This 177-nucleotide RNA was probed chemically with DMS and 2A3. The RNA was probed in 150 mM KOAc, 10 mM MgCl2 and 150 mM bicine (pH 8.5) at 24 C. For 2A3 the reverse transcriptase was SuperScript II with manganese. The 2A3 profile rests on 3,428 reads.
RNA sequence: GGGAACGACUCGAGUAGAGUCGAAAAGUAGUGUCUACACUAAUAGCUGCCUUGUAUCGUCUGAUGGACAACCUGGCGGUGAUGCUAUUAGUUUGAGUUUUAAUAACCUUUUAGGGUUUGAUUCUAGGAUAGGAAAAGAGUUCGCUCUUUUCCUAUCAAAAGAAACAACAACAACAAC
Reactivity to DMS in 0.01 (KOAc 150mM, MgCl2 10mM, bicine 150mM(pH8.5), 24C), signal-to-noise 6, nucleotides 027 to 126: g020u010a070g020u010g000u000c020u000a090c120a070c010u000a000a010u000a010g010c000u010g000c010c010u000u000g010u010a090u010c170g010u000c010u000g020a170u010g010g010a020c030a080a050c020c030u000g000g020c010g020g010u000g010a060u020g010c000u000a010u000u000a020g000u000u000u010g010a090g010u000u000u000u010a060a130u000a040a030c010c010u000u010u010u010a150g010g000g010u000u000u000g000a120u000u000c020u000a110g000
Reactivity to 2A3 in 0.01 (KOAc 150mM, MgCl2 10mM, bicine 150mM(pH8.5), 24C), signal-to-noise 4, nucleotides 027 to 126: g050u110a010g050u020g050u070c050u080a050c020a000c040u010a000a010u000a010g030c040u040g000c020c000u010u030g060u060a170u090c040g040u000c030u070g270a130u300g110g020a000c000a040a040c010c010u000g000g000c020g000g090u120g020a040u110g000c010u010a010u000u000a010g010u010u030u100g030a030g010u100u100u060u020a130a120u070a020a030c000c000u080u120u080u250a140g040g030g000u020u030u030g050a060u010u030c010u040a010g150